The record gives the reactivity of an RNA of 177 nucleotides to 2A3 and DMS. For 2A3, 919 sequencing reads were counted. The reactions ran in a buffer of 150 mM KOAc, 10 mM MgCl2 and 150 mM bicine (pH 8.5), at 24 C.
RNA sequence: GGGAACGACUCGAGUAGAGUCGAAAACACGCUUGGCGUGGCGAUUACCGACGAUCCGCUGCCAGUCUUCGCCAAGGCGCACGGUGUCCUUGAUUUCACCAGCCCUGCCGCAAGUGUGGAAUUUGCACUCAGUGGGCUGGUUCGCCAGCCCACUGAGAAAAGAAACAACAACAACAAC
Reactivity to 2A3 in 0.01 (KOAc 150mM, MgCl2 10mM, bicine 150mM(pH8.5), 24C), signal-to-noise 1, nucleotides 027 to 126: c040a010c010g010c000u060u090g180g070c050g120u070g010g000c020g040a040u050u080a070c090c120g000a020c090g070a150u030c050c040g060c090u070g000c000c000a030g030u000c000u040u020c030g000c000c000a010a040g070g020c050g000c040a110c090g000g000u030g010u030c050c000u180u230g120a230u030u130u070c030a010c000c000a000g040c000c000c010u090g000c070c000g000c010a010a040g020u060g000u050g040g000a040a080u150u100u150g040c040a000
Reactivity to DMS in 0.01 (KOAc 150mM, MgCl2 10mM, bicine 150mM(pH8.5), 24C), signal-to-noise 2, nucleotides 027 to 126: c050a040c040g000c070u000u010g050g000c040g020u010g000g000c030g020a110u000u010a090c020c040g010a060c040g010a110u040c110c030g040c110u000g000c020c050a070g030u000c020u000u000c090g030c040c040a130a090g000g020c110g010c040a080c120g020g010u000g010u000c080c140u000u000g010a140u000u000u020c060a040c020c000a130g020c030c010c000u000g020c160c020g010c100a070a030g010u020g000u000g030g010a120a090u000u030u020g020c170a220